[RMDB]
RNA sequence: GGGAACGACUCGAGUAGAGUCGAAAAGAGUGAGACAGUGAGACAGUCUCAGACAGAGUCACAGAGUGUCUCAGAGUCAGUCACUCAGACUCUCUGACAGACAGUGAGUGUCUGUGACAGUCACUCACGUGUCGAAAUGGUUCGCCAUUUCGACACGAAAAGAAACAACAACAACAAC
Reactivity to DMS in 0.01 (KOAc 150mM, MgCl2 10mM, bicine 150mM(pH8.5), 24C), signal-to-noise 5, nucleotides 027 to 126: g000a060g020u000g000a080g000a070c070a130g020u010g000a070g010a060c050a100g010u000c000u000c050a100g000a030c020a110g020a160g010u000c010a070c110a080g010a110g010u000g000u000c000u000c050a040g000a100g000u000c050a070g000u010c090a040c080u010c060a080g010a030c030u000c000u000c050u000g000a050c100a060g000a100c060a070g000u000g010a030g000u000g010u000c000u000g000u000g010a040c070a040g020u000c030a100c020u000c030a080
Reactivity to 2A3 in 0.01 (KOAc 150mM, MgCl2 10mM, bicine 150mM(pH8.5), 24C), signal-to-noise 3, nucleotides 027 to 126: g040a000g030u050g010a030g040a030c050a110g110u040g070a050g020a040c020a060g100u000c010u020c000a010g010a000c000a020g240a010g120u050c010a030c030a040g120a010g210u060g000u000c040u000c040a010g000a000g010u060c050a020g030u040c020a010c080u110c030a000g000a020c000u020c000u000c010u020g050a050c000a090g030a010c010a020g020u020g070a110g080u020g050u000c000u010g040u020g050a030c040a030g020u000c010a000c020u000c000a020
The data come from the RNA Mapping Database (RMDB), library OK2TRN.
The record gives the reactivity of an RNA of 177 nucleotides to DMS and 2A3.
2A3 adducts were read by reverse transcription with SuperScript II with manganese.
Conditions: 150 mM KOAc, 10 mM MgCl2 and 150 mM bicine (pH 8.5), 24 C.
2A3 is a SHAPE reagent: it acylates the 2'-hydroxyl of flexible nucleotides of all four kinds.